An RNA of 177 nucleotides, treated with 2A3 and DMS and read out base by base. For DMS the reverse transcriptase was MarathonRT. For 2A3, 50,783 sequencing reads were counted. 2A3 adducts were read by reverse transcription with SuperScript II with manganese. Values cover nucleotides 27 to 126.
RNA sequence: GGGAACGACUCGAGUAGAGUCGAAAAGAGGACUGAUGGCCGUGGCAAUACUCAUCCUGGCCGUGUGGUUGAUCGGCGGCGCCCUGCUAUUCCUGCCGUUCGCCCUUGUGGUCUCACCGCGCUUGCCGUAUAUAUCAUAAUUCGUUAUGAUAUAUACAAAAGAAACAACAACAACAAC
Reactivity to 2A3 in 0.01 (KOAc 150mM, MgCl2 10mM, bicine 150mM(pH8.5), 24C), signal-to-noise 9, nucleotides 027 to 126: g030a010g020g010a020c030u050g020a040u060g050g000c020c040g110u050g020g000c080a080a090u110a240c070u070c110a090u070c010c020u010g010g000c000c020g020u040g020u100g010g050u060u100g020a030u030c020g020g000c000g020g000c020g020c020c020c010u060g040c020u060a080u080u050c010c010u020g000c010c010g010u010u020c020g020c000c010c010u070u180g120u170g080g000u010c010u010c020a030c010c020g010c000g020c030u070u150g060c030c020
Reactivity to DMS in 0.01 (KOAc 150mM, MgCl2 10mM, bicine 150mM(pH8.5), 24C), signal-to-noise 9, nucleotides 027 to 126: g000a060g010g010a050c050u000g010a070u000g010g010c010c020g020u000g020g020c230a080a090u010a110c190u000c130a110u000c000c010u000g010g010c010c040g020u010g020u010g010g010u000u000g010a050u000c030g010g010c020g010g010c070g010c030c170c060u000g010c090u000a200u000u000c030c010u000g010c030c020g010u000u000c050g000c020c010c040u000u000g020u010g010g000u000c030u000c040a120c070c070g010c040g010c020u000u010g020c140c110